Background:
Chemical mapping of a 307-nucleotide RNA with DMS and 2A3. For DMS the reverse transcriptase was MarathonRT. Reactivities are given for positions 27 through 266. For 2A3, 9,988 sequencing reads were counted. The data come from the RNA Mapping Database (RMDB), library POS240. The DMS profile rests on 7,372 reads. 2A3 adducts were read by reverse transcription with SuperScript II with manganese.
[RMDB]
RNA sequence: GGGAACGACUCGAGUAGAGUCGAAAACGUUAGCUACGGCUAACGAAGAUCGAGGCGUGAGCCUCGAUCAAGCCUCUCGUUCGCGAGAGGCACCUGUGCGUUCGCGCACAGGAACAGGCCGUUCGCGGCCUGACGAAGUCACGUGAGUGACUUCGAAGAAUAAAAAAAACUAAAUAGUAUCACGUGAGUGAUACACUUAUUCGGUGACGAAUAAGACGCUCAACCUCAGAGCGCAAGAGUCGAACGAAUACAGUUCGACAUGAGGUACACCGAAGUUCGCUUCGGUGAAAAGAAACAACAACAACAAC
Reactivity to DMS in 0.01 (KOAc 150mM, MgCl2 10mM, bicine 150mM(pH8.5), 24C), signal-to-noise 2, nucleotides 027 to 266: c000g010u000u000a010g000c000u010a070c190g050g000c020u000a000a000c020g030a090a130g010a010u000c000g020a030g010g020c000g020u020g000a150g050c000c010u000c000g010a000u000c000a090a110g000c000c000u000c000u000c000g010u000u020c200g020c000g000a010g000a000g020g020c000a000c030c000u000g010u000g000c020g010u010u020c210g090c020g050c020a020c000a010g000g020a280a190c000a010g000g010c000c010g010u000u000c110g040c010g020g000c000c000u000g000a090c040g000a010a000g020u000c000a000c000g010u010g020a130g020u000g010a010c010u020u020c030g000a090a110g010a130a090u070a010a000a030a070a020a100a090a140c150u050a070a050a170u050a210g000u010a010u000c000a010c000g010u020g000a120g010u000g010a010u000a000c010a080c010u000u000a000u010u010c030g000g000u030g000a230c000g000a010a020u000a000a020g020a300c000g000c000u000c000a060a020c000c000u000c000a010g000a010g010c060g020c270a110a070g010a000g040u000c010g000a000a000c000g020a230a160u000a160c170a140g010u000u000c020g000a000c000a010u000g000a000g010g000u000a300
Reactivity to 2A3 in 0.01 (KOAc 150mM, MgCl2 10mM, bicine 150mM(pH8.5), 24C), signal-to-noise 5, nucleotides 027 to 266: c000g000u000u010a000g000c000u020a060c290g150g000c000u000a000a000c000g010a030a010g000a000u000c000g000a000g010g000c010g010u060g050a040g010c010c010u000c000g000a000u000c000a000a010g010c010c000u000c000u000c000g030u050u070c300g030c010g110a000g000a000g000g000c000a040c000c000u010g000u000g000c000g030u030u070c270g020c000g010c130a000c000a010g000g010a010a040c000a000g000g000c010c010g030u060u060c210g040c020g130g000c000c000u000g000a010c010g000a000a000g000u000c000a000c030g080u110g130a090g010u000g000a030c000u000u000c000g000a020a020g040a010a030u300a130a030a020a010a000a000a010a010c110u230a130a100a110u200a140g000u000a000u000c000a010c020g060u070g160a090g010u000g000a050u000a000c010a010c000u000u000a000u010u010c000g060g090u150g110a090c010g000a000a000u000a000a000g010a000c000g000c000u010c010a040a000c000c000u000c000a000g000a000g000c020g010c100a100a070g020a010g090u010c000g000a000a000c000g030a050a020u270a300c090a070g010u000u000c000g000a000c000a000u000g000a000g000g000u010a000